Annotation
Chemical mapping of a 177-nucleotide RNA with 2A3 and DMS. The reactions ran in a buffer of 150 mM KOAc, 10 mM MgCl2 and 150 mM bicine (pH 8.5), at 24 C. The DMS profile rests on 4,591 reads. DMS adducts were read by reverse transcription with MarathonRT.

RNA sequence: GGGAACGACUCGAGUAGAGUCGAAAACGAGAGGCAAAUGUGGUCAUGAGUCGCGGGCGGAUACCGAGGCUGGGCGCUGCCGUACUGGUGGCGUUGACGACCGCGGCGGCGGCGUGCGGGGCCGAUAAACUAGACAGAACUUCGGUUCUGUCUAGUUAAAAGAAACAACAACAACAAC
Reactivity to 2A3 in 0.01 (KOAc 150mM, MgCl2 10mM, bicine 150mM(pH8.5), 24C), signal-to-noise 1, nucleotides 027 to 126: c050g000a010g020a010g080g030c040a030a080a120u120g040u110g030g000u070c050a120u070g080a000g020u040c000g000c010g050g000g000c050g040g020a070u070a110c000c060g010a020g110g030c060u060g050g030g000c020g020c000u000g000c000c010g070u170a180c090u120g000g060u020g040g000c050g000u030u090g040a030c040g010a020c020c030g000c010g010g020c010g000g000c000g010g000c020g000u020g000c000g020g020g050g020c000c000g000a010u100a040
Reactivity to DMS in 0.01 (KOAc 150mM, MgCl2 10mM, bicine 150mM(pH8.5), 24C), signal-to-noise 3, nucleotides 027 to 126: c110g000a110g020a120g010g000c060a040a060a090u010g010u000g010g020u010c070a070u010g010a120g030u010c040g020c040g000g000g020c070g000g000a100u010a080c050c040g000a100g000g010c050u000g010g000g020c010g000c010u000g000c000c000g020u010a080c180u010g020g040u000g000g000c030g020u000u000g000a100c080g020a040c030c020g000c050g010g000c040g010g000c030g020g010c030g020u000g000c080g010g010g000g020c050c020g000a070u010a040